[RMDB]
RNA sequence: GGGAACGACUCGAGUAGAGUCGAAAAGGGGCAACUCUUCUCAGAAUCCAGCGAGAGGCGUAGGAGAGAGGGCCGCGGUGCUCUGGAGUAGAGGCUUCUUGCUUCGAAACACCAUCGAUCGUCCCUUACACUCUAUUCUGUUCGCAGAAUAGAGUGUAAAAGAAACAACAACAACAAC
Reactivity to DMS in 0.01 (KOAc 150mM, MgCl2 10mM, bicine 150mM(pH8.5), 24C), signal-to-noise 1, nucleotides 027 to 126: g000g010g020g010c080a110a110c010u000c000u010u000c010u050c050a220g010a120a150u010c040c030a120g000c180g010a130g030a050g000g050c150g020u020a100g000g010a070g010a080g020a060g000g020g020c070c060g030c010g040g010u000g000c000u020c020u010g020g000a080g010u000a100g000a010g010g000c010u010u010c280u010u020g020c010u000u000c000g010a130a160a190c020a000c180c030a020u010c000g000a100u010c030g000u010c010c010c000u000u000
Reactivity to 2A3 in 0.01 (KOAc 150mM, MgCl2 10mM, bicine 150mM(pH8.5), 24C), signal-to-noise 2, nucleotides 027 to 126: g070g000g020g000c010a020a130c040u030c000u080u040c030u000c000a070g290a100a070u010c020c040a080g100c110g120a300g000a060g220g090c080g090u150a020g020g030a000g000a000g000a050g010g020g020c020c010g010c030g030g010u000g000c010u000c000u010g000g000a010g000u010a000g010a010g020g010c010u090u050c090u140u300g000c000u020u000c010g000a000a020a000c000a000c040c040a020u010c000g000a050u050c020g040u030c000c000c000u000u010
This 177-nucleotide RNA was probed chemically with DMS and 2A3.
High 2A3 reactivity points to a flexible backbone, as in loops and unpaired stretches.
For DMS, 850 sequencing reads were counted.
Reactivities are rounded to 0.1 and cut off at 0 and 3.
It was measured as part of the RMDB library VIROID.
Values cover nucleotides 27 to 126.
The reactions ran in a buffer of 150 mM KOAc, 10 mM MgCl2 and 150 mM bicine (pH 8.5), at 24 C.